[RMDB]
An RNA of 307 nucleotides, treated with 2A3 and DMS and read out base by base. The 2A3 profile rests on 7,574 reads. For DMS the reverse transcriptase was MarathonRT.

RNA sequence: GGGAACGACUCGAGUAGAGUCGAAAAACAUCAAAAGAUGAAAAAUCCAGCAGUAGUCAGCCGUCUGGACAGAACCAUUCCUGUGAUGGUGUUACACUGCUGGAAGAGGAAUGUCCUGUCUUCUUCCAGUUGUCUCUGUCACUGUUCUGGUGGCGUCUGACACUGGUGCAAGGCAGAACUGUGCUUCCUUGAGAGUAUGCUAAGCAUUCACUUUGGCUGCUUAGUUCUAGUCUAGAAGUGGACACAAAAUACUAGCAAAAGCUAGAAGCUAUACGUUCGCGUAUAGCAAAAGAAACAACAACAACAAC
Reactivity to 2A3 in 0.01 (KOAc 150mM, MgCl2 10mM, bicine 150mM(pH8.5), 24C), signal-to-noise 4, nucleotides 027 to 266: a000c030a030u070c040a010a140a240a240g040a040u060g100a140a180a100a050a070u040c030c000a040g000c020a030g000u270a070g010u020c050a000g040c020c000g030u010c010u130g140g060a070c050a040g100a050a030c100c040a140u160u090c060c030u120g030u040g060a000u010g000g010u040g020u050u040a020c020a000c010u010g010c010u020g030g000a000a000g000a000g030g040a120a040u120g020u060c010c000u020g010u000c010u010u000c000u130u050c000c000a020g020u190u070g010u090c000u030c050u180g010u020c000a010c010u060g230u300u180c160u300g010g000u000g000g010c010g040u050c080u030g000a000c000a000c000u000g000g000u000g020c070a010a020g020g000c010a010g000a020a000c020u040g010u060g080c050u010u020c000c000u040u040g070a040g010a020g080u110a060u130g010c000u050a060a040g000c010a020u030u050c020a060c220u140u180u260g030g000c010u010g000c000u030u010a000g000u000u030c020u020a030g040u000c000u020a040g030a120a030g120u180g080g020a010c020a000c030a070a130a090a080u250a140c050u040a000g030c020a150a120a250a070g040c000u030a000g070a070a010
Reactivity to DMS in 0.01 (KOAc 150mM, MgCl2 10mM, bicine 150mM(pH8.5), 24C), signal-to-noise 3, nucleotides 027 to 266: a130c020a010u000c010a130a000a120a040g000a000u000g000a030a050a070a170a030u010c010c000a020g000c000a030g010u000a120g010u000c300a230g010c020c000g040u000c020u010g000g010a050c170a040g020a100a130c160c240a120u010u010c050c020u020g020u020g020a030u010g000g020u000g000u010u030a040c060a050c050u000g000c000u010g000g000a010a040g000a080g010g020a090a060u010g000u000c050c000u020g010u000c000u000u000c040u000u000c000c000a020g000u010u020g020u010c000u000c180u020g000u000c000a000c000u010g000u010u020c180u030g000g000u000g010g010c000g000u010c160u000g010a010c000a020c020u000g000g000u000g010c170a030a010g000g000c010a010g000a030a010c030u010g000u000g020c120u000u010c040c020u000u000g030a070g010a040g000u000a030u010g000c000u000a020a020g010c010a010u000u010c020a090c300u000u010u000g010g020c050u000g000c000u000u000a010g010u000u000c130u000a080g000u000c000u000a060g020a100a060g020u010g000g010a040c060a030c090a110a110a140a100u030a140c010u000a020g010c000a130a120a160a130g010c000u010a000g000a160a210